[RMDB]
RNA sequence: GGGAACGACUCGAGUAGAGUCGAAAAGAAAGAAAGAAAAGAAGACAAUCUCAAGCCCAAAUUCGAUCUGACUUUGCCGGUACCUUGUUAAGCAAGAUCGAAUUUGUGCUUGAGCUCGACUUCUAAAAAGACAUUUCCAUUUCGAUGGAAAUGUCUUAAAAGAAACAACAACAACAAC
Reactivity to DMS in 0.01 (KOAc 150mM, MgCl2 10mM, bicine 150mM(pH8.5), 24C), signal-to-noise 1, nucleotides 027 to 126: g010a160a130a190g000a070a110a060g000a150a140a030a000g000a010a000g000a030c030a010a030u020c000u000c010a020a000g000c010c000c000a000a000a000u010u000c000g000a000u010c000u000g000a030c010u000u000u000g000c010c000g000g010u000a000c030c030u000u000g010u000u000a020a000g020c050a000a000g000a000u000c020g000a000a010u000u000u010g000u000g020c000u000u000g000a010g010c010u000c070g000a010c000u000u000c000u000a030a040a040